[RMDB]
RNA sequence: GGGAACGACUCGAGUAGAGUCGAAAACAUGGAUCGUUCGCGAUCCAUGGCAGGUGGUGGUGGGACCAGCCGUCCCAGGCUUUUGGCAUCCCAGCCUUUCCAAUCCAGCCUAUUUCGAUAGGCUGAAUUAGUAAUUCUCAUUCGUGAGAAUUACUAAAAAAGAAACAACAACAACAAC
Reactivity to 2A3 in 0.01 (KOAc 150mM, MgCl2 10mM, bicine 150mM(pH8.5), 24C), signal-to-noise 5, nucleotides 027 to 126: c010a000u000g000g000a000u010c020g010u090u050c240g000c020g120a000u000c000c000a000u010g000g010c070a020g030g090u090g010g040u070g030g210u050g030g030g010a020c010c010a020g020c010c010g050u090c020c030c020a020g030g010c020u110u180u260u260g020g000c020a050u050c000c000c000a030g030c020c000u030u050u000c020c010a020a050u040c050c000a000g000c010c010u000a010u000u120u080c220g070a020u000a000g000g000c010u000g000a000a010
Reactivity to DMS in 0.01 (KOAc 150mM, MgCl2 10mM, bicine 150mM(pH8.5), 24C), signal-to-noise 8, nucleotides 027 to 126: c010a010u000g000g000a010u000c000g020u000u010c210g020c010g010a010u000c000c000a010u000g000g000c180a060g010g020u010g010g020u000g010g020u000g010g000g010a100c030c040a090g010c040c050g000u000c060c040c060a180g000g010c030u000u000u020u000g000g010c070a100u000c020c010c010a180g000c010c010u000u000u000c020c020a120a100u010c080c000a010g000c000c000u000a010u000u000u010c170g010a020u000a000g010g000c000u000g000a010a030
An RNA of 177 nucleotides, treated with 2A3 and DMS and read out base by base. For DMS, 19,666 sequencing reads were counted. For 2A3, 11,861 sequencing reads were counted. The RNA was probed in 150 mM KOAc, 10 mM MgCl2 and 150 mM bicine (pH 8.5) at 24 C.